Structure probing data (DMS and 2A3) for a 177-nucleotide construct.
For 2A3, 900 sequencing reads were counted.
For DMS the reverse transcriptase was MarathonRT.
Reactivities are given for positions 27 through 126.
Source: RMDB library OK2TRN, as collected in RNAgym.
Conditions: 150 mM KOAc, 10 mM MgCl2 and 150 mM bicine (pH 8.5), 24 C.

RNA sequence: GGGAACGACUCGAGUAGAGUCGAAAACUAUGUCACCCAGGCUGGUCUUGAACAUGUGGCCUCAAGUGAUCCUCCCACCUUGGCUUCCCAAAGUGCUGGGAUUACAGGUGUGAGCCACUGCGCCCAGCAUCUGCGCUCAGUUCGCUGAGCGCAGAUGAAAAGAAACAACAACAACAAC
Reactivity to DMS in 0.01 (KOAc 150mM, MgCl2 10mM, bicine 150mM(pH8.5), 24C), signal-to-noise 2, nucleotides 027 to 126: c100u000a070u010g020u010c090a130c060c030c050a110g000g000c020u010g020g000u000c030u030u010g000a080a100c090a100u020g030u000g010g010c000c020u000c050a080a060g020u000g010a060u010c110c000u000c030c100c010a060c020c040u020u000g030g020c250u000u000c050c000c010a020a030a100g010u010g020c100u000g010g010g000a030u000u000a060c010a070g020g000u020g010u000g000a090g000c050c010a020c020u000g000c140g000c040c010c020a030g020
Reactivity to 2A3 in 0.01 (KOAc 150mM, MgCl2 10mM, bicine 150mM(pH8.5), 24C), signal-to-noise 1, nucleotides 027 to 126: c040u070a140u160g120u200c050a060c070c040c020a050g080g000c010u040g040g050u000c020u070u230g050a110a020c000a110u140g020u130g050g010c050c020u020c020a090a090g030u010g080a070u020c010c040u010c010c000c000a020c020c000u000u010g080g010c050u140u110c050c000c010a000a050a000g100u100g040c010u040g030g050g000a010u010u090a040c010a020g120g060u050g040u000g070a020g080c000c030a100c010u000g020c070g000c020c010c040a000g000